[RMDB]
RNA sequence: GGGAACGACUCGAGUAGAGUCGAAAAGAAACCAUCAUGGACGAGGCACCAUGCGCUCCGGAGGACUUCCUAGCGGAGGAAUCCCAGCAACACACUGCGAGGAGUGAAGCUGACAUUGAUGAAGAGCCGACCUGCAUGAUUUCGAUCAUGCAGGUCGAAAAGAAACAACAACAACAAC
Reactivity to 2A3 in 0.01 (KOAc 150mM, MgCl2 10mM, bicine 150mM(pH8.5), 24C), signal-to-noise 1, nucleotides 027 to 126: g020a020a060a010c030c010a040u070c020a050u050g040g020a080c090g050a100g000g000c020a000c110c020a030u110g020c060g010c060u000c010c030g010g030a070g040g050a050c020u100u020c050c000u090a070g050c060g120g020a020g020g010a010a010u000c000c000c010a000g030c000a000a050c060a000c000a020c130u020g050c060g110a070g000g040a030g010u050g000a020a010g030c010u000g010a040c050a110u110u180g060a080u140g080a060a070g020a000g160c030
Reactivity to DMS in 0.01 (KOAc 150mM, MgCl2 10mM, bicine 150mM(pH8.5), 24C), signal-to-noise 2, nucleotides 027 to 126: g020a110a150a150c080c000a090u000c040a010u000g000g020a120c060g020a100g000g010c060a120c080c130a040u000g000c120g040c030u000c010c090g000g030a070g010g000a300c110u000u000c010c030u000a160g000c120g030g000a020g000g010a150a180u000c000c010c050a050g010c030a010a170c060a070c060a040c010u000g030c280g000a080g010g000a050g000u010g000a090a140g010c000u000g020a130c070a030u010u030g010a100u000g000a130a100g000a080g000c090